[RMDB]
RNA sequence: GGGAACGACUCGAGUAGAGUCGAAAAGUCUCACUCUAAGUGGGCUACACUAGUUAAUCUCCGUCUGGGGUUAAAUAGAAGAGCUUAAUCAGACUAGCUGAAUGGAAGCCUGUUACUGGGCCGAUGUUUAUGCGAAAUGCUAAUACGGUGACUACGCGUACCUUCCUUAGUUCGCUAAGGAAGGUACAAAAGAAACAACAACAACAAC
Reactivity to DMS in 0.01 (KOAc 150mM, MgCl2 10mM, bicine 150mM(pH8.5), 24C), signal-to-noise 2, nucleotides 027 to 156: g010u010c000u000c010a050c050u000c090u000a040a090g030u000g000g010g010c020u000a040c050a090c010u010a040g020u000u000a010a020u010c010u000c060c150g010u000c050u010g010g010g020g000u000u000a000a000a070u000a020g010a130a070g000a100g000c180u010u010a030a090u010c000a060g020a070c000u000a100g010c010u000g010a040a050u010g020g010a190a030g000c020c010u000g020u000u000a110c130u010g040g010g010c010c010g020a300u010g020u000u000u000a020u030g000c000g000a090a080a180u000g020c070u000a040a080u000a070c060g020g040u000g000a130c040u000a080c060g030c260
Reactivity to 2A3 in 0.01 (KOAc 150mM, MgCl2 10mM, bicine 150mM(pH8.5), 24C), signal-to-noise 4, nucleotides 027 to 156: g060u030c040u040c070a020c000u110c040u120a160a100g010u010g000g000g000c010u090a020c020a020c020u010a010g000u010u010a020a020u000c020u010c040c070g010u020c020u030g000g010g000g000u000u000a010a030a030u060a020g110a190a030g030a050g050c090u140u230a020a030u080c010a000g000a010c000u000a000g000c000u000g010a010a000u030g040g040a010a020g000c000c010u010g010u000u020a010c030u020g000g000g010c000c000g000a010u020g030u010u010u010a150u240g020c000g010a010a020a060u230g050c200u250a010a000u010a020c010g000g000u010g010a000c010u040a030c120g030c030
The record gives the reactivity of an RNA of 207 nucleotides to DMS and 2A3. High 2A3 reactivity points to a flexible backbone, as in loops and unpaired stretches. It was measured as part of the RMDB library ARCHII. Values cover nucleotides 27 to 156. Conditions: 150 mM KOAc, 10 mM MgCl2 and 150 mM bicine (pH 8.5), 24 C.